[RMDB]
Source information: This 177-nucleotide RNA was probed chemically with DMS and 2A3. The RNA was probed in 150 mM KOAc, 10 mM MgCl2 and 150 mM bicine (pH 8.5) at 24 C. Source: RMDB library OK2TRN, as collected in RNAgym.
RNA sequence: GGGAACGACUCGAGUAGAGUCGAAAACAGAUCAAGCAGCUGGAGGAUCGUCAUGCCAGGGACAUCAAGGAUCUGAAUGCCAAGCAAGCAAAGAUGUCGGCGGAUACCGCCAAGGAGGUACAAAACACAUACGCCGAUGAUUCGUCAUCGGCGUAUGAAAAGAAACAACAACAACAAC
Reactivity to DMS in 0.01 (KOAc 150mM, MgCl2 10mM, bicine 150mM(pH8.5), 24C), signal-to-noise 2, nucleotides 027 to 126: c100a080g010a020u010c060a100a100g010c090a090g000c020u000g020g000a080g000g010a050u000c080g000u000c050a090u020g030c030c040a150g000g050g000a020c010a010u010c030a060a090g000g010a050u010c050u000g040a060a120u000g000c040c020a060a130g000c090a080a100g000c070a050a110a120g000a030u000g000u000c090g000g010c000g020g000a090u010a070c060c020g010c000c020a060a110g010g020a020g010g000u000a020c140a040a050a090a090c240a110
Reactivity to 2A3 in 0.01 (KOAc 150mM, MgCl2 10mM, bicine 150mM(pH8.5), 24C), signal-to-noise 1, nucleotides 027 to 126: c010a010g050a070u130c050a110a030g000c040a000g020c050u060g000g000a020g030g050a140u090c050g030u070c090a030u070g030c020c020a030g080g000g050a020c000a040u060c030a080a090g070g030a040u070c030u100g040a130a000u100g000c000c010a010a020g040c020a030a010g040c030a040a150a000g050a030u010g090u130c020g000g040c030g000g010a030u130a100c000c010g020c000c020a010a020g130g000a050g000g050u110a070c090a030a030a050a020c130a000
For DMS, 1,552 sequencing reads were counted. Reactivities are rounded to 0.1 and cut off at 0 and 3. For 2A3, 943 sequencing reads were counted. DMS (dimethyl sulfate) methylates the pairing face of unpaired adenines and cytosines.